[RMDB]
RNA sequence: GGGAACGACUCGAGUAGAGUCGAAAAGAACCAGCGAAUUUAUGCGUAACCAGAAAUUUGAGCAAGUCGUAUGAUCGGAAAUAUGUUAUUUGUGUAGGAAACACGUCCAAGCUUGAUGAGGUGAGACGGAGAGCUCGUCAUGUUUAUACGAGGUUUGCCUCACAUUAUUGUUCGCAAUAAUGUGAGGAAAAGAAACAACAACAACAAC
Reactivity to DMS in 0.01 (KOAc 150mM, MgCl2 10mM, bicine 150mM(pH8.5), 24C), signal-to-noise 2, nucleotides 027 to 156: g000a080a100c030c010a120g020c010g040a110a090u000u020u000a070u020g010c000g030u000a090a090c090c050a300g000a060a050a110u000u000u000g000a150g000c030a070a100g030u000c050g040u000a050u000g010a070u000c010g000g030a050a070a070u000a030u000g010u000u000a050u010u000u000g040u010g000u010a030g010g010a050a120a060c050a030c050g020u010c050c030a090a120g040c030u000u020g010a130u000g020a100g010g030u000g020a130g030a170c100g020g000a130g000a060g010c020u000c040g020u010c050a110u000g020u000u010u000a120u000a080c040g020a140g030g030u020u010u000g000
Reactivity to 2A3 in 0.01 (KOAc 150mM, MgCl2 10mM, bicine 150mM(pH8.5), 24C), signal-to-noise 6, nucleotides 027 to 156: g050a040a050c030c010a010g030c040g060a070a090u080u100u120a130u220g040c010g020u050a030a060c030c030a050g120a120a130a080u180u180u150g050a090g030c040a040a010g040u040c020g000u040a030u060g050a080u060c020g040g000a010a030a010u110a040u050g050u070u050a100u050u100u150g060u020g000u020a030g060g000a080a070a000c070a010c060g030u020c050c020a070a040g030c050u080u060g020a040u040g010a040g000g060u050g030a040g010a020c040g010g010a040g000a000g040c010u010c030g030u020c030a040u090g040u030u090u040a080u010a020c020g020a020g010g040u050u090u130g090